[RMDB]
RNA sequence: GGGAACGACUCGAGUAGAGUCGAAAACUUUCAGAUUAAGGCCUUGGGAAUGAGCUUUAAGCAGAAGCAACAUGUUGCAGAAACAAUUUGGGGCAUUGGUUGAAUGAUGCAUUUGAUCAUUCGACUGAUCAAAGUAACCAGGACCCAUUUACCCAUACAUACGUCGCUGAUUCGUCAGCGACGUAUGAAAAGAAACAACAACAACAAC
Reactivity to 2A3 in 0.01 (KOAc 150mM, MgCl2 10mM, bicine 150mM(pH8.5), 24C), signal-to-noise 2, nucleotides 027 to 156: c040u070u180u120c070a060g010a300u050u070a040a010g000g000c030c000u090u080g130g010g030a100a100u050g050a060g010c030u010u030u020a050a030g000c050a010g030a100a010g040c000a010a050c050a150u080g020u060u050g000c030a010g150a040a040a020c030a060a090u080u060u090g000g000g020g010c030a010u000u020g040g000u020u080g090a030a080u040g030a020u100g050c170a280u030u060u240g020a000u000c000a010u080u100c100g040a080c090u000g000a000u040c000a000a060a130g020u080a010a100c030c010a020g010g030a090c000c010c010a000u020u050u050a060c020c000c010a040u080a140

Overview
Structure probing data (2A3) for a 207-nucleotide construct. The RNA was probed in 150 mM KOAc, 10 mM MgCl2 and 150 mM bicine (pH 8.5) at 24 C. For 2A3 the reverse transcriptase was SuperScript II with manganese. It was measured as part of the RMDB library OK3TST.